[RMDB]
Background: Chemical mapping of a 177-nucleotide RNA with DMS and 2A3. Conditions: 150 mM KOAc, 10 mM MgCl2 and 150 mM bicine (pH 8.5), 24 C. For 2A3, 1,220 sequencing reads were counted. Reactivities are given for positions 27 through 126. The data come from the RNA Mapping Database (RMDB), library OK2TRN.
RNA sequence: GGGAACGACUCGAGUAGAGUCGAAAAUCGUACGGCGCACGAUCUGGCCCGAUCAGAGGCCAUGCGCUACUCACAGCGAUCCAGGCCCUGACGGCGCGGCCUCAGCGCGUGGAUCGAGACAGUACGAGAAUUACGAGCGGUUCGCCGCUCGUAAUUCAAAAGAAACAACAACAACAAC
Reactivity to DMS in 0.01 (KOAc 150mM, MgCl2 10mM, bicine 150mM(pH8.5), 24C), signal-to-noise 1, nucleotides 027 to 126: u000c000g010u000a020c000g000g000c040g030c000a080c260g000a170u000c210u000g020g010c000c000c050g000a200u010c160a100g000a120g010g010c060c030a160u000g000c000g010c000u000a070c050u000c050a110c200a090g000c010g000a070u000c050c020a000g000g000c000c040c010u000g000a030c260g010g000c030g010c220g000g010c010c000u000c040a010g000c300g020c000g000u010g000g020a000u000c000g100a060g010a090c060a000g020u000a010c000g020a030
Reactivity to 2A3 in 0.01 (KOAc 150mM, MgCl2 10mM, bicine 150mM(pH8.5), 24C), signal-to-noise 1, nucleotides 027 to 126: u050c000g020u000a000c010g060g000c000g000c000a010c110g100a160u090c030u080g020g010c040c050c040g020a300u300c100a080g120a120g070g000c000c010a030u040g000c030g000c000u030a010c000u030c000a040c030a030g060c000g010a000u000c030c010a000g030g000c020c020c030u000g000a020c110g010g040c180g000c170g300g110c000c000u060c000a000g000c020g040c030g110u000g000g000a000u000c020g000a010g010a030c040a000g010u010a000c000g000a030